[RMDB]
Structure probing data (DMS and 2A3) for a 207-nucleotide construct.
RNA sequence: GGGAACGACUCGAGUAGAGUCGAAAAGAUGGAGGGUCUGGCCUCGGACCCCUCCUAUAAGAUGUAACUAUUACGAGGCCAUUAAUGGCGUUUUCGCCUAGGUGCACGCCGGCGUGCGUGACACCGUAAGACUUAAUGAAUAACACGCCGGAUACAAAAUAGUCAGUACUUUCGAGUACUGACUAUUAAAAGAAACAACAACAACAAC
Reactivity to DMS in 0.01 (KOAc 150mM, MgCl2 10mM, bicine 150mM(pH8.5), 24C), signal-to-noise 2, nucleotides 027 to 156: g010a120u000g000g000a000g020g010g040u000c030u010g050g000c000c000u000c010g000g000a130c090c000c010c020u010c020c010u000a180u010a040a140g020a170u000g010u010a160a140c120u000a140u000u000a070c010g020a040g000g030c020c020a190u000u000a040a090u000g010g030c020g020u000u000u000u000c040g030c020c010u000a090g020g000u000g010c000a060c010g010c020c000g020g020c030g100u000g000c000g000u000g010a240c020a100c010c000g000u000a020a130g000a130c070u010u000a080a150u000g000a130a150u000a090a040c040a000c010g020c000c000g000g000a150u000a110c080a090a070
Reactivity to 2A3 in 0.01 (KOAc 150mM, MgCl2 10mM, bicine 150mM(pH8.5), 24C), signal-to-noise 2, nucleotides 027 to 156: g080a040u110g000g010a000g000g070g000u030c050u080g040g010c000c020u010c000g030g000a070c070c040c000c010u010c020c000u030a070u060a090a080g010a000u130g040u080a110a020c030u010a080u160u130a080c030g000a000g000g020c000c000a000u010u110a050a020u090g000g000c010g040u130u090u120u300c020g010c000c020u000a050g040g000u000g000c010a000c010g040c010c010g010g020c000g000u040g000c010g000u000g040a080c000a000c000c000g010u010a070a000g000a030c010u010u050a000a070u110g090a080a120u100a160a020c010a000c000g030c010c040g020g070a190u220a150c050a010a190
Description:
Conditions: 150 mM KOAc, 10 mM MgCl2 and 150 mM bicine (pH 8.5), 24 C. The 2A3 profile rests on 976 reads. For DMS the reverse transcriptase was MarathonRT.